RNA sequence: GGGAACGACUCGAGUAGAGUCGAAAAGAUAUGGACCCUGAACUACACCAGCCGAGGAUCUCUUUCGGAAACGAAAGAGGGAGGCUCCCUGCAGGGUCCUAAGUCAAAACAUCGCUUCGGCGAUGAAGCUAUACUUAACGUUCGCGUUAAGUAUAGCAAAAGAAACAACAACAACAAC
Reactivity to 2A3 in 0.01 (KOAc 150mM, MgCl2 10mM, bicine 150mM(pH8.5), 24C), signal-to-noise 4, nucleotides 027 to 126: g010a000u050a030u110g000g010a000c000c010c010u020g030a140a080c090u200a080c220a110c170c150a020g010c000c010g070a300g020g020a010u000c000u000c000u000u000u000c020g010g000a040a050a020c010g000a010a010a000g000a010g000g000g000a010g000g000c000u040c020c020c010u090g040c000a010g000g020g000u010c000c000u000a000a010g010u010c020a010a010a060a110c000a010u000c010g010c010u060u070c230g140g000c010g000a010u000g020a020a000
Reactivity to DMS in 0.01 (KOAc 150mM, MgCl2 10mM, bicine 150mM(pH8.5), 24C), signal-to-noise 4, nucleotides 027 to 126: g000a040u000a300u010g000g000a010c010c000c000u000g000a090a080c110u030a180c090a040c090c120a020g010c010c000g000a060g000g000a020u010c010u000c000u000u000u000c000g000g000a060a090a130c000g000a010a010a000g000a010g000g000g000a030g020g010c000u000c060c030c040u000g010c010a020g010g020g000u000c000c000u000a000a080g000u010c050a070a070a100a250c020a010u000c010g020c000u000u020c170g020g010c000g000a000u000g000a070a090